[RMDB]
RNA sequence: GGGAACGACUCGAGUAGAGUCGAAAACGAUGGAAGUUCAGUGCUGUGAACAACACAGGGACAUUUGACCUUGGGAAAAUGGGGAUAAUGACGUCCAUCCAUGCUAUGCUGCAGGGUAUGUCUGCACCUUACUUGCCACCUUCGGGUGGCAAGUAAGAAAAGAAACAACAACAACAAC
Reactivity to DMS in 0.01 (KOAc 150mM, MgCl2 10mM, bicine 150mM(pH8.5), 24C), signal-to-noise 2, nucleotides 027 to 126: c100g000a040u000g030g020a040a030g000u040u000c060a100g030u020g030c010u000g000u010g020a190a140c270a070a080c040a060c000a030g010g000g010a200c020a100u000u090u040g060a250c000c000u010u000g060g030g000a070a050a020a050u040g000g030g010g000a100u030a070a070u170g000a080c040g000u010c000c010a030u000c000c140a130u020g000c090u010a040u000g020c030u000g000c070a010g000g020g000u000a080u000g000u060c010u000g000c000a040c200
Reactivity to 2A3 in 0.01 (KOAc 150mM, MgCl2 10mM, bicine 150mM(pH8.5), 24C), signal-to-noise 4, nucleotides 027 to 126: c030g050a070u040g030g040a050a040g070u120u200c110a090g050u080g110c000u020g020u000g120a160a090c080a110a000c020a080c000a050g000g040g040a040c030a050u020u060u080g110a090c000c000u110u090g100g000g090a010a180a060a080u130g010g000g000g010a010u100a080a070u160g050a000c040g010u000c000c000a000u010c010c000a030u160g020c010u150a080u300g020c040u020g000c060a010g000g080g020u150a190u170g040u040c010u010g000c000a030c010
An RNA of 177 nucleotides, treated with DMS and 2A3 and read out base by base. The RNA was probed in 150 mM KOAc, 10 mM MgCl2 and 150 mM bicine (pH 8.5) at 24 C. For 2A3, 1,712 sequencing reads were counted. It was measured as part of the RMDB library OK1LIB. The DMS profile rests on 1,963 reads.